Overview: This 207-nucleotide RNA was probed chemically with 2A3.
[RMDB]
RNA sequence: GGGAACGACUCGAGUAGAGUCGAAAAUGCAGACAGGUUUUGAGCUUGUGGGAAAAGUAUGGAGGCCUGGCCAGGACGUAGUAGUGGUUAUUUUUUCUGCCGACACAGUAGUUGUCCCUGACAUACCUAUUGGUGAGAAUAUAGUGGAAACAAACUAAGUACUUUUCCUGUUCGCAGGAAAAGUACUAAAAGAAACAACAACAACAAC
Reactivity to 2A3 in 0.01 (KOAc 150mM, MgCl2 10mM, bicine 150mM(pH8.5), 24C), signal-to-noise 2, nucleotides 027 to 156: u080g000c000a010g060a000c020a030g140g040u010u110u110u140g070a040g040c080u120u090g030u050g020g000g000a040a050a020a020g090u090a120u130g050g000a030g020g020c050c080u050g010g010c000c050a010g000g000a030c040g010u070a040g020u020a020g050u030g030g040u090u010a120u080u100u000u000u060u030c000u010g020c010c030g060a020c020a010c000a100g060u140a000g000u010u110g040u010c040c040c000u020g000a020c000a080u090a040c000c010u100a070u090u110g050g000u090g040a040g040a050a010u110a030u040a050g060u060g060g000a070a030a010c020a020a000a010c040u140a020
For 2A3, 756 sequencing reads were counted. The reactions ran in a buffer of 150 mM KOAc, 10 mM MgCl2 and 150 mM bicine (pH 8.5), at 24 C.